Conditions: 150 mM KOAc, 10 mM MgCl2 and 150 mM bicine (pH 8.5), 24 C.
The record gives the reactivity of an RNA of 177 nucleotides to 2A3 and DMS.
For 2A3 the reverse transcriptase was SuperScript II with manganese.
The DMS profile rests on 1,134 reads.
RNA sequence: GGGAACGACUCGAGUAGAGUCGAAAAGAUAUGGACUACUCAUAACGGGUAGAGUUCCACUCGGAAACGAGUGAACUCUAUAAUCUAUCAAGUAGUCCUAAGUCAAACCGGUGGUUCGCCACCGGAAGCCGUAGAAUAGGUUCGCCUAUUCUACGGCAAAAGAAACAACAACAACAAC
Reactivity to 2A3 in 0.01 (KOAc 150mM, MgCl2 10mM, bicine 150mM(pH8.5), 24C), signal-to-noise 2, nucleotides 027 to 126: g020a010u060a030u130g000g000a000c010u020a010c000u020c130a110u130a300a110c200g120g080g110u060a020g010a000g000u010u000c220c030a000c000u020c000g050g010a060a040a040c000g000a000g000u000g010a000a000c010u000c000u010a020u040a060a090u050c050u040a080u140c050a060a020g000u000a000g010u000c010c000u000a050a010g030u010c030a070a070a120c020c000g000g000u000g010g080u040u100c300g070c160c010a000c000c000g000g000a000a000
Reactivity to DMS in 0.01 (KOAc 150mM, MgCl2 10mM, bicine 150mM(pH8.5), 24C), signal-to-noise 2, nucleotides 027 to 126: g000a020u000a260u020g010g000a030c000u000a010c000u010c190a060u000a110a100c240g000g010g020u000a020g010a020g010u000u000c120c140a020c010u000c010g000g020a070a090a120c000g050a010g000u000g000a000a000c000u000c020u010a020u010a140a060u000c060u000a100u000c190a060a040g010u000a010g010u000c000c000u010a000a100g010u020c020a100a150a100c000c010g010g040u000g010g000u010u010c250g010c000c000a000c010c000g000g000a030a050